Structure probing data (DMS and 2A3) for a 177-nucleotide construct. Values cover nucleotides 27 to 126. 2A3 adducts were read by reverse transcription with SuperScript II with manganese. The RNA was probed in 150 mM KOAc, 10 mM MgCl2 and 150 mM bicine (pH 8.5) at 24 C.

[RMDB]
RNA sequence: GGGAACGACUCGAGUAGAGUCGAAAACUAUGUACAGACAGUACAGUGGAUAAGGUCUCUAGAUAUCCAACUUUAACAAUGGUACUUGCAGUGGUAUCUAUCAAGAUAGGCAGGCUAUCAUAGAAAGAAGAUGUGUUUUAUUCGUAGGACGCAUCUUAAAAGAAACAACAACAACAAC
Reactivity to DMS in 0.01 (KOAc 150mM, MgCl2 10mM, bicine 150mM(pH8.5), 24C), signal-to-noise 4, nucleotides 027 to 126: c020u010a010u000g000u000a000c010a110g000a110c190a120g020u000a000c000a030g000u010g010g010a050u010a060a050g000g010u000c030u020c040u010a300g000a080u000a030u000c000c010a060a140c090u010u070u110a090a150c090a060a020u000g000g010u000a030c010u000u000g010c030a110g000u030g020g010u000a010u000c000u010a030u050c210a070a050g000a020u010a020g000g010c020a030g000g000c220u000a000u010c000a020u010a080g010a070a300a300g000
Reactivity to 2A3 in 0.01 (KOAc 150mM, MgCl2 10mM, bicine 150mM(pH8.5), 24C), signal-to-noise 3, nucleotides 027 to 126: c020u030a030u080g000u000a000c010a070g190a010c020a020g050u010a000c000a030g050u040g040g000a040u020a090a030g090g070u000c020u000c000u000a030g020a070u060a010u010c000c000a010a010c020u040u050u110a070a010c060a030a070u040g010g010u030a020c020u010u020g000c010a030g020u040g120g000u040a000u000c010u000a150u060c080a090a000g000a020u000a010g030g010c040a000g000g000c010u000a000u000c000a000u020a020g100a020a300a000g240